[RMDB]
RNA sequence: GGGAACGACUCGAGUAGAGUCGAAAAGAGCAGGAUCGGCACGGUGCCGAGCAUCGUCACCGGCGCGAAAUCGUUGAGCGGAUCGAACGGCAGGCUUUUGUACAGCGUGGGAUUGAUCGCCAUGAUGGCAGUCCUUCUAAUUCGUUAGAAGGACUGCAAAAGAAACAACAACAACAAC
Reactivity to DMS in 0.01 (KOAc 150mM, MgCl2 10mM, bicine 150mM(pH8.5), 24C), signal-to-noise 2, nucleotides 027 to 126: g010a140g010c030a100g030g000a100u000c030g000g040c070a090c070g000g020u000g000c040c040g030a130g030c160a070u000c040g020u000c030a050c020c000g020g030c090g020c070g000a060a080a070u000c040g020u000u000g010a120g010c060g000g000a060u000c060g020a040a110c100g010g020c020a070g000g000c030u010u000u000u000g010u010a070c140a090g000c030g000u000g000g000g000a110u000u000g000a030u000c070g000c020c030a110u020g000a090u000g030
Reactivity to 2A3 in 0.01 (KOAc 150mM, MgCl2 10mM, bicine 150mM(pH8.5), 24C), signal-to-noise 2, nucleotides 027 to 126: g100a020g000c060a020g050g080a080u060c010g070g010c050a020c150g030g030u020g000c000c010g020a020g150c030a070u090c010g000u010c010a010c060c000g040g000c070g000c040g060a080a040a020u150c080g010u090u130g020a010g040c000g030g060a020u070c020g030a040a030c060g060g000c040a020g000g020c030u040u130u080u170g080u120a070c070a040g030c040g110u040g030g040g030a040u060u100g030a020u060c020g080c060c010a040u140g020a040u090g150